[RMDB]
RNA sequence: GGGAACGACUCGAGUAGAGUCGAAAAGUUGGUUAAACACAAACACACCUUUUUGACACUUUUCUUGUUGCCUGUGGCUAUUUGUUUGACUUAUGCAAACAUAGUCUACGAGCCCACUACUCCCAUUACCGUCUUGUCUUCGGACAAGACAAAAGAAACAACAACAACAAC
Reactivity to DMS in 0.01 (KOAc 150mM, MgCl2 10mM, bicine 150mM(pH8.5), 24C), signal-to-noise 6, nucleotides 027 to 129: g000u000u000g010g030u020u020a110a140a070c220a110c220a100a070a040c070a100c070a060c080c070u020u010u010u010u040g010a080c000a000c040u020u010u010u000c030u020u030g020u050u020g010c060c060u000g040u000g000g010c020u030a050u040u060u080g050u000u030u030g000a050c080u070u100a120u140g060c020a010a040a040c030a050u030a030g030u040c020u050a010c060g030a100g020c040c040c010a000c090u060a150c040u000c010c020c010a060u050u080a080c110c100
Reactivity to 2A3 in 0.01 (KOAc 150mM, MgCl2 10mM, bicine 150mM(pH8.5), 24C), signal-to-noise 9, nucleotides 027 to 129: g000u010u020g050g040u050u090a090a210a020c130a020c080a110a140a010c160a020c010a050c110c000u020u020u010u020u040g020a020c020a020c030u030u040u050u010c020u020u040g030u020u040g050c030c060u070g010u020g020g000c010u020a070u080u120u100g060u030u010u020g060a120c040u160u230a090u300g050c020a000a020a000c000a020u010a010g010u000c020u030a020c020g020a010g020c000c020c000a020c020u060a040c020u030c010c000c000a020u060u130a120c060c060